[RMDB]
RNA sequence: GGGAACGACUCGAGUAGAGUCGAAAAGCGUAGCGAGAGGUGAAAGUUGACGACCUACGUAGGACAAACCGAAGCGAAAGCUGUCGUCCAGUACGUUUCCGGUGAUCAAGGACGUAAGCCGGAGGAGGAUCAAUAUGUGCUUCGGCACAUAUUGAUCAAAAGAAACAACAACAACAAC
Reactivity to 2A3 in 0.01 (KOAc 150mM, MgCl2 10mM, bicine 150mM(pH8.5), 24C), signal-to-noise 1, nucleotides 027 to 126: g000c000g030u060a020g000c030g020a050g000a010g160g080u140g100a100a050a030g110u120u080g020a030c020g000a000c000c010u050a040c040g030u050a050g000g040a010c010a060a100a040c040c050g040a040a000g020c020g010a070a000a040g060c000u040g040u010c030g040u010c000c030a050g050u100a030c120g000u020u070u020c030c020g000g000u040g040a140u240c060a090a050g120g110a050c050g030u020a040a000g000c000c070g000g000a030g010g120a040g070
Reactivity to DMS in 0.01 (KOAc 150mM, MgCl2 10mM, bicine 150mM(pH8.5), 24C), signal-to-noise 2, nucleotides 027 to 126: g000c040g040u000a070g000c070g010a140g000a040g010g000u010g000a050a020a110g000u000u000g000a110c030g000a160c240c060u000a050c040g000u010a050g000g000a100c080a010a070a070c100c040g000a100a020g010c020g030a110a070a240g030c000u000g000u000c080g000u000c000c030a090g010u010a030c020g000u000u000u000c020c000g000g000u010g000a130u020c080a120a120g040g010a110c160g030u000a020a240g000c000c000g000g000a110g000g000a110g000